An RNA of 177 nucleotides, treated with 2A3 and DMS and read out base by base.
[RMDB]
RNA sequence: GGGAACGACUCGAGUAGAGUCGAAAAGAUAUGGACUCCAGGGAGCUUAAGUGUCGGAAACGACAUGAUGAGCAUCGAUCUGGAGGUCCUAAGUCAAAAUCCGUCCUAACUUCGGUUAGGACGGAAACGAUCUAUAUACGUUCGCGUAUAUAGAUCGAAAAGAAACAACAACAACAAC
Reactivity to 2A3 in 0.01 (KOAc 150mM, MgCl2 10mM, bicine 150mM(pH8.5), 24C), signal-to-noise 6, nucleotides 027 to 126: g000a010u010a000u040g000g000a000c000u000c000c000a000g000g010g000a020g000c000u020u010a060a040g020u010g000u000c000g000g010a010a010a010c010g000a010c020a010u040g020a030u300g020a010g000c000a030u300c010g000a000u000c000u010g010g000a040g050g020u020c000c000u000a000a000g010u000c000a020a030a010a280u000c000c000g000u000c000c000u000a000a010c000u050u080c280g100g000u000u000a000g000g010a000c000g000g000a010a010a010
Reactivity to DMS in 0.01 (KOAc 150mM, MgCl2 10mM, bicine 150mM(pH8.5), 24C), signal-to-noise 7, nucleotides 027 to 126: g000a010u000a010u010g010g000a050c000u000c000c000a010g000g010g000a000g030c000u000u000a130a300g000u000g000u000c000g020g000a000a000a020c000g010a010c000a000u000g000a030u020g000a010g010c010a300u000c200g000a020u010c000u010g000g000a020g010g010u010c000c000u000a000a060g000u000c000a110a060a110a110u000c000c000g010u000c000c000u010a000a010c000u000u020c200g020g000u000u000a010g000g000a000c010g000g000a000a010a070
Background
For DMS, 17,399 sequencing reads were counted. For 2A3 the reverse transcriptase was SuperScript II with manganese. Source: RMDB library TTRDEL, as collected in RNAgym. The RNA was probed in 150 mM KOAc, 10 mM MgCl2 and 150 mM bicine (pH 8.5) at 24 C. For DMS the reverse transcriptase was MarathonRT.